This 177-nucleotide RNA was probed chemically with 2A3. As a SHAPE reagent, 2A3 marks flexible, mostly unpaired nucleotides at the ribose 2'-OH.
[RMDB]
RNA sequence: GGGAACGACUCGAGUAGAGUCGAAAAACGAUCGCUAACAUAAAGCACAACAAAGACUUGCUUUUAGGUAUAUGUGUCGGAUUCUUCUUCGGCGUCUUUGGUAUACUAUUAAUGAAGUUUGAUGGAAGCAGGGAUGAUAGUUCGCUAUCAUCCCUGCAAAAGAAACAACAACAACAAC
Reactivity to 2A3 in 0.01 (KOAc 150mM, MgCl2 10mM, bicine 150mM(pH8.5), 24C), signal-to-noise 2, nucleotides 027 to 126: a010c020g050a040u120c190g050c010u030a100a000c000a090u210a120a170a000g040c020a020c000a130a100c020a000a070a000g120a130c010u080u120g050c000u020u090u220u140a100g010g070u080a020u000a010u060g100u000g060u130c000g000g000a090u300u000c030u230u000c010u000u000c000g000g030c000g130u080c100u180u090u130g020g020u000a000u000a140c050u000a040u290u000a100a140u180g070a060a020g050u080u110u020g120a230u130g060g060a090a090
The RNA was probed in 150 mM KOAc, 10 mM MgCl2 and 150 mM bicine (pH 8.5) at 24 C. 2A3 adducts were read by reverse transcription with SuperScript II with manganese.